[RMDB]
RNA sequence: GGGAACGACUCGAGUAGAGUCGAAAACUUCUCUUUCGAGAGAAGAGCCGCGUACUACUAGACAUGCCUCAUACAUGGAGAGCGAUCCCAAAUAGGAUCGCUCGAUGAAAUGUAGGAGGCAACAGCUAGUAUCGCAUCGGAUCCCAUUCGUGGGAUCGGCUAGAAGAUGUUUCGACAUCUUCUAGCCAAAAGAAACAACAACAACAAC
Reactivity to 2A3 in 0.01 (KOAc 150mM, MgCl2 10mM, bicine 150mM(pH8.5), 24C), signal-to-noise 1, nucleotides 027 to 156: c000u000u000c020u000c000u030u090u170c280g130a010g000a000g000a010a000g000a020g090c060c090g030c030g010u060a110c060u010a010c000u000a050g080a180c030a130u030g000c000c000u000c000a040u020a020c010a040u040g020g000a030g000a000g090c010g030a010u020c030c000c040a160a300a170u290a120g000g000a000u000c000g010c000u000c000g000a030u000g000a000a000a010u020g000u000a010g030g030a000g000g000c020a010a000c010a010g010c000u010a010g000u020a050u300c020g000c040a050u190c070g130g000a000u040c000c000c000a000u060u160c260g060u030g010g020g000a000u010c040
Reactivity to DMS in 0.01 (KOAc 150mM, MgCl2 10mM, bicine 150mM(pH8.5), 24C), signal-to-noise 1, nucleotides 027 to 156: c000u000u000c000u000c010u000u000u000c210g040a060g020a060g010a000a030g000a110g020c060c050g040c000g020u000a090c180u000a020c030u010a040g000a080c110a300u000g030c050c010u010c020a030u000a020c010a020u000g010g000a150g000a010g000c020g020a030u010c000c000c010a010a170a210u000a060g010g010a000u000c000g010c010u000c000g000a050u000g050a130a060a020u000g010u010a050g010g060a000g010g020c000a030a000c080a120g000c010u010a020g060u000a030u000c060g000c050a170u000c090g030g000a090u000c000c000c000a070u000u000c160g000u000g000g010g010a010u000c000